[RMDB]
RNA sequence: GGGAACGACUCGAGUAGAGUCGAAAAGAUAUGGAUACCAGGCGUUCAACAGCUCGGAAACGAGACAUGAACCCUGAGUAUCCUAAGUCAAAAGUAAUAUAGCUCUCUUCGGAGAGCUAUAUUACAAGAUAUCCAGUCAGUUCGCUGACUGGAUAUCAAAAGAAACAACAACAACAAC
Reactivity to DMS in 0.01 (KOAc 150mM, MgCl2 10mM, bicine 150mM(pH8.5), 24C), signal-to-noise 2, nucleotides 027 to 126: g010a050u010a300u020g010g010a020u000a000c000c010a020g000g010c220g030u000u000c010a020a090c270a210g030c000u000c020g000g000a090a040a210c010g010a020g000a040c090a210u000g000a010a010c020c000c010u000g000a090g040u010a000u000c000c000u010a010a080g000u000c030a050a080a160a130g000u010a000a000u000a000u000a000g000c000u010c010u010c000u000u000c130g010g000a030g000a000g000c000u000a000u000a000u010u000a000c000a070a060